An RNA of 207 nucleotides, treated with 2A3 and read out base by base. The RNA was probed in 150 mM KOAc, 10 mM MgCl2 and 150 mM bicine (pH 8.5) at 24 C. Values are in units of 0.01, from 0 to 300, in steps of 10. The 2A3 profile rests on 512 reads.
RNA sequence: GGGAACGACUCGAGUAGAGUCGAAAAACUAAAAAAGCAUGACUGUGUGCCAAACCUGCUUGCUGUGCAACUUCAGAUGCUAGCAUGUUGAUCAGGAGUCCUUUGAUUACAUCUGAACCUUUAUUCCUUUUGUCAUCUCAAGGGGGUUACACCAUGACCGUGGCAUUAGUUUCGACUAAUGCCACGGAAAAGAAACAACAACAACAAC
Reactivity to 2A3 in 0.01 (KOAc 150mM, MgCl2 10mM, bicine 150mM(pH8.5), 24C), signal-to-noise 1, nucleotides 027 to 156: a010c050u190a200a020a000a020a130a020g040c060a040u070g090a130c270u110g060u030g000u020g050c000c020a110a090a090c010c030u050g000c030u000u040g000c010u030g010u010g070c050a030a170c080u110u110c030a060g010a220u030g010c010u030a000g030c000a010u010g070u010u130g110a130u000c000a030g030g000a010g110u040c000c010u020u000u080g030a010u040u070a000c000a010u030c010u060g050a140a110c060c050u210u170u050a100u240u100c020c000u010u010u120u000g040u010c040a080u020c030u000c080a050a050g000g020g080g030g000u130u090a000c040a010c030c030a060u050g010a010